This 177-nucleotide RNA was probed chemically with DMS and 2A3. The data come from the RNA Mapping Database (RMDB), library TTRDEL. The reactions ran in a buffer of 150 mM KOAc, 10 mM MgCl2 and 150 mM bicine (pH 8.5), at 24 C. For DMS, 607 sequencing reads were counted.
RNA sequence: GGGAACGACUCGAGUAGAGUCGAAAAGAUAUGGAGAAUCGUGUACGUUGAUGACCUCGGAAACGAGCAAGACGAACACGAGUUCUCCUAAGUCAAACUACAAGAAGGGUUCGCCCUUCUUGUAGAACCAUUGCCUACGCUUCGGCGUAGGCAAUGGAAAAGAAACAACAACAACAAC
Reactivity to DMS in 0.01 (KOAc 150mM, MgCl2 10mM, bicine 150mM(pH8.5), 24C), signal-to-noise 1, nucleotides 027 to 126: g040a070u000a300u000g010g000a050g000a020a020u000c000g030u000g000u000a060c000g000u000u010g020a110u000g000a060c300c000u000c000g020g000a060a090a190c010g000a090g010c070a030a040g020a000c000g030a060a000c010a000c000g000a000g010u000u000c000u000c000c000u000a000a040g010u000c000a210a120a300c000u000a000c000a000a020g010a010a010g020g000g050u000u020c300g050c000c000c000u010u000c000u020u000g010u000a000g010a110a200
Reactivity to 2A3 in 0.01 (KOAc 150mM, MgCl2 10mM, bicine 150mM(pH8.5), 24C), signal-to-noise 1, nucleotides 027 to 126: g060a040u090a040u100g020g000a000g000a030a000u010c000g000u000g010u030a050c020g030u010u060g150a300u220g080a130c050c000u000c020g050g030a060a120a090c000g010a000g010c040a060a150g020a010c020g030a080a000c060a000c040g020a020g010u030u000c000u000c000c000u000a060a000g000u010c050a020a050a170c000u000a000c000a000a000g000a080a000g040g000g000u070u260c260g240c030c010c110u030u000c000u020u000g000u000a000g000a090a010